[RMDB]
RNA sequence: GGGAACGACUCGAGUAGAGUCGAAAACAAGAGAAAAGUGGCUCUCCCUUAGCCAUCCGAGUGGACGUCCGUCCUCCUUCGGAUGCCCAGGUCGGACCGCGAGGAGGUGGAGAUGCCAUGCCGACCCGGUACCGGUAUAGUUCGCUAUACCGGUACCAAAAGAAACAACAACAACAAC
Reactivity to 2A3 in 0.01 (KOAc 150mM, MgCl2 10mM, bicine 150mM(pH8.5), 24C), signal-to-noise 1, nucleotides 027 to 126: c020a000a050g080a000g110a180a120a070a140g020u010g030g000c000u010c010u000c000c020c020u020u070a040g040c030c010a030u010c020c010g000a010g050u000g000g000a010c010g000u000c040c010g040u040c010c080u080c040c000u050u030c020g000g000a020u040g010c000c000c000a020g040g120u040c010g000g020a040c000c090g000c040g020a090g040g020a040g030g050u230g060g020a020g010a030u090g000c020c010a000u010g050c010c030g100a080c040c020c000
Reactivity to DMS in 0.01 (KOAc 150mM, MgCl2 10mM, bicine 150mM(pH8.5), 24C), signal-to-noise 1, nucleotides 027 to 126: c120a150a090g020a160g000a040a050a130a210g060u000g020g000c010u000c050u000c000c000c090u000u000a110g000c070c030a100u030c030c000g020a010g030u000g010g010a010c020g000u000c160c040g040u030c040c050u000c060c020u000u000c010g050g030a010u010g000c010c000c040a040g030g010u000c010g010g010a190c090c300g000c110g000a080g000g020a050g000g000u000g000g000a060g030a030u010g020c000c020a010u000g000c030c030g010a110c010c020c160